[RMDB]
RNA sequence: GGGAACGACUCGAGUAGAGUCGAAAAGUGCGGAUUGAAAUUCAUGGGAGCCUCUCCAUAAUGGAUGAACGCCGCGCUAGUACGCGCAGUCGCGACGUAAACGCUCUGUCUUCCCGUUCAGGCCUCAGAUGAUCGUAUUAUUCGUAAUACGAUCAUCAAAAGAAACAACAACAACAAC
Reactivity to 2A3 in 0.01 (KOAc 150mM, MgCl2 10mM, bicine 150mM(pH8.5), 24C), signal-to-noise 7, nucleotides 027 to 126: g010u020g010c010g000g060a160u090u140g050a170a110a010u020u030c010a020u030g010g010g010a030g080c080c060u250c010u000c050c000a070u240a280a030u080g010g020a010u010g010a100a030c060g000c010c000g000c000g000c000u000a020g030u060a010c030g010c010g000c060a050g140u210c060g030c020g050a110c020g040u040a070a110a020c040g000c010u010c010u030g030u010c000u030u010c010c010c010g000u080u070c040a040g020g080c000c030u080c060a020
Reactivity to DMS in 0.01 (KOAc 150mM, MgCl2 10mM, bicine 150mM(pH8.5), 24C), signal-to-noise 9, nucleotides 027 to 126: g030u000g010c010g000g000a060u010u010g010a180a150a030u000u000c020a020u010g010g010g000a040g020c240c130u020c050u000c000c000a090u010a110a030u000g000g010a020u000g000a100a160c260g000c010c010g010c010g010c010u000a090g010u000a040c080g010c050g010c060a120g010u000c130g010c010g010a060c050g010u000a040a090a140c100g000c020u000c010u000g000u000c050u000u000c010c010c010g010u010u000c110a080g000g000c040c090u000c110a170